[RMDB]
RNA sequence: GGGAACGACUCGAGUAGAGUCGAAAAUCGUCGAGGCGAAAUGAGUUACUCGUUCGCCGAUCUGAAGGCCAAUGGGCUAUCGCUCGUCUUGGGCUGAGUCACCGCGGUAUUCGGCACGGCGCACCGCUCACAGAAUUUCGUUCGCGAAAUUCUGUGAAAAAGAAACAACAACAACAAC
Reactivity to 2A3 in 0.01 (KOAc 150mM, MgCl2 10mM, bicine 150mM(pH8.5), 24C), signal-to-noise 6, nucleotides 027 to 126: u090c030g050u020c040g040a060g000g030c020g010a020a030a120u160g010a040g100u210u170a180c050u030c000g040u010u020c020g000c000c010g010a020u000c020u060g050a070a030g040g010c000c010a020a070u120g050g000g000c050u100a130u140c130g010c010u020c010g120u080c120u120u220g040g040g000c050u090g010a000g050u060c040a030c150c030g000c010g010g030u050a080u050u060c020g030g030c050a020c090g010g000c010g010c010a030c020c000g030c010
Reactivity to DMS in 0.01 (KOAc 150mM, MgCl2 10mM, bicine 150mM(pH8.5), 24C), signal-to-noise 4, nucleotides 027 to 126: u070c030g030u030c050g000a160g030g040c020g010a040a010a050u040g000a050g010u050u020a110c040u000c000g010u010u000c000g010c000c000g000a090u030c060u000g060a080a090g010g010c020c030a060a170u010g000g000g020c020u020a040u020c160g000c020u000c000g000u020c110u020u020g040g040g020c050u020g000a060g000u000c020a090c080c060g000c150g020g010u000a110u020u010c060g000g040c290a150c050g010g010c040g010c140a090c010c020g010c100